[RMDB]
RNA sequence: GGGAACGACUCGAGUAGAGUCGAAAAUCUAACUCAUUCGUGAGUUAGAGUGAGCGCAGCGACCAUUGGGCCGGUGGCGCGCUGUCGGUGCCGGGCGUGGCGAUAGUGCUUGCUUCGGCAAGCACAAUGGUAUCCAUACAUUCGUGUAUGGAUACCAAAAAGAAACAACAACAACAAC
Reactivity to 2A3 in 0.01 (KOAc 150mM, MgCl2 10mM, bicine 150mM(pH8.5), 24C), signal-to-noise 3, nucleotides 027 to 126: u000c000u000a000a030c000u000c010a020u090u050c200g110u020g020a010g000u010u010a000g000a040g030u130g100a060g040c050g000c030a050g020c010g120a200c010c010a110u070u200g010g030g000c050c010g040g010u020g040g020c080g000c050g000c100u040g030u040c030g010g050u060g100c030c020g070g000g000c060g020u050g030g010c010g000a060u090a100g000u000g000c000u020u010g000c000u020u050c220g100g000c000a000a000g020c000a000c000a000a020
Reactivity to DMS in 0.01 (KOAc 150mM, MgCl2 10mM, bicine 150mM(pH8.5), 24C), signal-to-noise 4, nucleotides 027 to 126: u000c000u000a000a000c000u000c000a040u000u010c200g010u000g000a030g000u000u000a000g000a020g010u010g000a110g020c040g000c020a080g010c010g000a100c020c010a120u010u010g000g010g010c040c020g010g020u000g000g010c040g020c130g010c020u000g010u000c030g010g010u000g010c020c040g000g000g020c040g030u000g010g010c020g000a100u000a100g020u000g000c000u000u000g000c000u000u010c180g030g000c000a000a000g010c010a000c010a030a050
The record gives the reactivity of an RNA of 177 nucleotides to 2A3 and DMS. Conditions: 150 mM KOAc, 10 mM MgCl2 and 150 mM bicine (pH 8.5), 24 C. 2A3 adducts were read by reverse transcription with SuperScript II with manganese. For DMS the reverse transcriptase was MarathonRT. Reactivities are given for positions 27 through 126.